[RMDB]
RNA sequence: GGGAACGACUCGAGUAGAGUCGAAAAAGGCUGAUCACGCCCAAGAGUUCAUAUCGACGGCGUGGUUUGGCACCUCGAUGUCGGCUCGUCGCAUCCUGGGGCUGGAGAAGGUCCCAAGGGUCCGGCUUCUUUACGACGUUUUCGAACGUCGUAAAGAAAAAGAAACAACAACAACAAC
Reactivity to 2A3 in 0.01 (KOAc 150mM, MgCl2 10mM, bicine 150mM(pH8.5), 24C), signal-to-noise 3, nucleotides 027 to 126: a000g090g000c000u000g000a020u030c000a000c000g040c000c000c000a030a000g020a000g000u170u260c150a080u150a020u130c030g000a000c000g030g010c000g000u000g000g000u010u000u030g000g020c010a060c010c000u000c000g030a030u270g020u030c000g020g000c020u000c000g000u000c010g000c010a000u010c000c000u000g000g000g000g000c020u120g090g040a210g060a240a080g060g030u040c000c000c000a060a120g000g000g000u030c030c000g010g000c000u030
Reactivity to DMS in 0.01 (KOAc 150mM, MgCl2 10mM, bicine 150mM(pH8.5), 24C), signal-to-noise 1, nucleotides 027 to 126: a070g010g030c020u000g010a040u000c000a010c130g020c000c010c030a140a300g010a030g030u010u040c250a150u120a010u000c050g000a300c300g000g040c010g000u080g000g000u000u000u010g080g070c000a300c210c190u020c020g000a010u000g000u000c000g000g000c000u000c000g000u000c000g000c220a000u000c000c000u000g000g070g000g000c000u000g000g010a120g000a130a240g000g000u000c000c000c000a000a030g010g000g010u000c040c000g030g000c000u000